[RMDB]
RNA sequence: GGGAACGACUCGAGUAGAGUCGAAAAACUUCUCGUAGUAAUUGCUGGCUCUGGUCCAGCUGUCAUUUUUGCAUACCAGAGAAAUGGAAUCAUAUUUAUUCUGAAAUACACUGAGGAACAAACUUCACGUAAAUAAUGCGUUCGCGCAUUAUUUACGAAAAGAAACAACAACAACAAC
Reactivity to 2A3 in 0.01 (KOAc 150mM, MgCl2 10mM, bicine 150mM(pH8.5), 24C), signal-to-noise 2, nucleotides 027 to 126: a040c000u050u000c010u000c010g060u070a180g000u020a180a150u160u200g000c020u010g000g000c000u000c060u140g000g070u040c020c000a030g000c050u000g020u000c020a050u080u000u210u300u210g000c010a030u050a070c000c050a020g000a010g070a110a030a000u200g000g040a000a030u040c020a040u100a060u270u130u090a140u140u000c020u010g040a050a040a000u080a030c080a000c050u120g000a050g070g000a080a040c050a050a040a050c030u110u060c050a030
Reactivity to DMS in 0.01 (KOAc 150mM, MgCl2 10mM, bicine 150mM(pH8.5), 24C), signal-to-noise 2, nucleotides 027 to 126: a110c300u000u000c010u000c030g000u000a070g040u030a050a080u000u000g000c010u000g000g000c080u000c090u000g000g010u000c030c040a050g010c040u000g000u020c090a080u000u000u010u000u020g000c100a110u000a060c030c000a040g000a080g010a050a090a080u020g000g020a040a040u000c100a060u010a130u000u000u010a070u030u000c000u000g000a070a060a060u000a050c070a070c110u010g000a120g000g000a060a020c180a070a020a120c070u010u030c080a090